This 177-nucleotide RNA was probed chemically with DMS and 2A3.
Conditions: 150 mM KOAc, 10 mM MgCl2 and 150 mM bicine (pH 8.5), 24 C.
For 2A3 the reverse transcriptase was SuperScript II with manganese.
For 2A3, 1,059 sequencing reads were counted.
The DMS profile rests on 1,781 reads.
RNA sequence: GGGAACGACUCGAGUAGAGUCGAAAAUAAAACCUUGAUGUGUAGGAUAGGUGGGAGGCUUUGAAGUGUGGACGCCAGUCUGCAUGGAGCCGACCUUGAAAUACCAGCCUUUAAUGGAAAAAAAAAACUUAAUCGUAAAGUUCGCUUUACGAUUAAGAAAAGAAACAACAACAACAAC
Reactivity to DMS in 0.01 (KOAc 150mM, MgCl2 10mM, bicine 150mM(pH8.5), 24C), signal-to-noise 2, nucleotides 027 to 126: u000a040a110a180a130c020c010u010u000g010a070u000g010u000g060u010a060g000g000a110u000a010g010g020u000g010g000g000a260g010g010c010u010u010u000g000a070a160g020u000g020u000g020g010a020c020g000c190c220a140g010u020c010u000g000c020a000u000g000g000a010g010c010c000g010a060c020c000u000u000g000a060a080a090u010a050c010c000a220g000c040c020u000u000u010a090a040u000g010g000a000a000a000a000a010a050a050a140a040a280
Reactivity to 2A3 in 0.01 (KOAc 150mM, MgCl2 10mM, bicine 150mM(pH8.5), 24C), signal-to-noise 1, nucleotides 027 to 126: u100a000a070a010a000c000c000u050u070g100a060u060g150u050g060u100a010g000g060a050u050a050g020g040u040g050g040g010a080g030g000c040u250u230u080g110a050a050g000u010g010u020g000g030a010c030g050c120c010a050g000u000c010u030g000c010a010u000g000g030a020g000c010c000g020a060c000c000u000u040g020a030a000a000u040a050c010c010a000g080c000c020u150u050u110a090a140u200g010g040a070a020a020a020a000a000a000a000a000a000